[RMDB]
RNA sequence: GGGAACGACUCGAGUAGAGUCGAAAAUAAGAAGAGUCAAUCAUUUUCUACGACCGGUCGGCGAGUCAGUUAAGGUAAUUUCGUCUCAUGAACUACUACGAAUAUCUGAGAAACUACGCAAUGACGCCCUGAAUAGUCCAUACGCUGAUAUUCGAGAGUAUGUGCUUCCAUUCGUGGAAGCACAUACAAAAGAAACAACAACAACAAC
Reactivity to 2A3 in 0.01 (KOAc 150mM, MgCl2 10mM, bicine 150mM(pH8.5), 24C), signal-to-noise 3, nucleotides 027 to 156: u220a050a000g130a030a040g020a020g060u130c090a080a100u030c070a100u070u080u050u040c060u050a060c020g040a040c070c000g060g020u060c050g020g000c030g020a000g040u010c020a010g000u060u090a090a020g010g050u000a030a150u030u130u080c040g020u020c010u010c030a090u090g030a060a050c080u160a070c020u040a040c080g030a060a050u000a010u040c020u050g030a010g020a150a040a020c080u150a040c040g000c110a020a160u070g020a050c010g040c020c010c000u020g010a090a040u010a080g000u000c040c020a040u020a150c100g000c090u090g020a020u050a050u130u070c050g010a010g030a000
Reactivity to DMS in 0.01 (KOAc 150mM, MgCl2 10mM, bicine 150mM(pH8.5), 24C), signal-to-noise 1, nucleotides 027 to 156: u010a000a160g020a180a100g040a080g000u000c060a160a180u040c050a170u000u000u000u000c010u020a110c120g000a050c010c000g040g000u000c040g000g020c020g000a050g040u000c060a090g120u000u000a040a080g010g000u000a020a080u000u030u000c050g020u000c060u010c020a210u000g010a070a050c050u020a100c050u020a120c030g000a020a030u000a030u000c000u010g010a120g030a120a050a090c020u000a020c000g030c050a080a120u020g020a060c040g000c050c040c010u020g000a010a040u000a060g000u000c040c060a050u000a060c010g010c010u000g020a020u000a100u020u000c000g000a170g010a300
Structure probing data (2A3 and DMS) for a 207-nucleotide construct. High 2A3 reactivity points to a flexible backbone, as in loops and unpaired stretches. Reactivities are given for positions 27 through 156. The RNA was probed in 150 mM KOAc, 10 mM MgCl2 and 150 mM bicine (pH 8.5) at 24 C.